Chemical mapping of a 177-nucleotide RNA with DMS and 2A3. For DMS the reverse transcriptase was MarathonRT. The reactions ran in a buffer of 150 mM KOAc, 10 mM MgCl2 and 150 mM bicine (pH 8.5), at 24 C. For DMS, 1,326 sequencing reads were counted.
[RMDB]
RNA sequence: GGGAACGACUCGAGUAGAGUCGAAAACAUAUUCAAUUGCUGUCUGAUAUGAACAAGAAAGGUGAUUUCACCUAUUUUGGUCGUAAAGAUGAAUCGACUGCCAAGUUCUAUAACGGUGAUUGCGCUAACCCGUCUAUGGAUUCGUCCAUAGACGGGUAAAAGAAACAACAACAACAAC
Reactivity to DMS in 0.01 (KOAc 150mM, MgCl2 10mM, bicine 150mM(pH8.5), 24C), signal-to-noise 2, nucleotides 027 to 126: c110a070u010a140u010u000c040a050a040u000u020g000c020u020g000u000c100u030g000a080u000a030u000g000a000a040c000a040a060g000a060a110a010g000g010u000g000a290u000u000u000c000a000c000c010u000a060u030u000u000u000g020g000u000c000g010u030a020a160a140g010a130u010g000a160a040u000c070g010a030c010u000g000c080c100a040a210g000u000u000c060u000a040u000a060a040c050g000g010u000g020a090u000u010g010c220g030c070u020a050
Reactivity to 2A3 in 0.01 (KOAc 150mM, MgCl2 10mM, bicine 150mM(pH8.5), 24C), signal-to-noise 3, nucleotides 027 to 126: c000a010u110a170u120u160c020a000a030u020u020g010c020u010g020u040c050u090g050a010u030a050u260g010a000a010c000a040a040g100a120a070a010g000g020u030g040a170u060u270u300c000a000c000c000u030a130u000u140u040u110g000g020u000c010g020u020a010a090a100g170a150u160g100a030a080u070c030g010a010c000u030g040c050c030a090a020g020u010u010c040u030a060u030a060a010c000g040g000u000g000a020u020u010g020c050g000c060u050a030